[RMDB]
RNA sequence: GGGAACGACUCGAGUAGAGUCGAAAACGUGCGCGCAUUUGAUGUGGCAUGCCAGGUUGCAGACCCACGCCACGUAAAAAGGCGGCUUCGCCAGAGCGUUGAGGUCUCUGUACUUGCAGAACGCGUGUCACUACCACGCCUUCGGGCGUGGUAGUGAAAAAGAAACAACAACAACAAC
Reactivity to 2A3 in 0.01 (KOAc 150mM, MgCl2 10mM, bicine 150mM(pH8.5), 24C), signal-to-noise 2, nucleotides 027 to 126: c020g030u100g000c070g000c000g020c030a010u060u100u300g260a100u130g070u140g030g030c010a000u030g010c000c010a020g010g010u140u110g020c000a000g000a040c000c000c000a000c020g000c010c000a170c040g100u250a040a100a110a110a020g000g000c000g050g030c020u200u140c000g020c010c000a030g020a020g120c000g000u070u170g090a150g000g030u020c000u000c000u140g030u090a190c000u030u010g030c000a030g040a180a070c020g020c000g000u030g000
Reactivity to DMS in 0.01 (KOAc 150mM, MgCl2 10mM, bicine 150mM(pH8.5), 24C), signal-to-noise 1, nucleotides 027 to 126: c040g020u010g010c000g040c020g000c120a000u040u030u000g000a070u000g000u050g010g160c020a120u000g000c130c040a110g000g000u030u000g010c100a080g000a030c010c000c000a030c070g010c030c070a060c160g000u020a070a030a040a150a040g000g000c000g030g010c140u040u050c000g020c010c020a100g010a080g000c090g000u030u000g010a120g000g000u000c020u000c000u000g020u000a110c070u000u000g010c000a090g000a050a060c080g050c000g020u030g000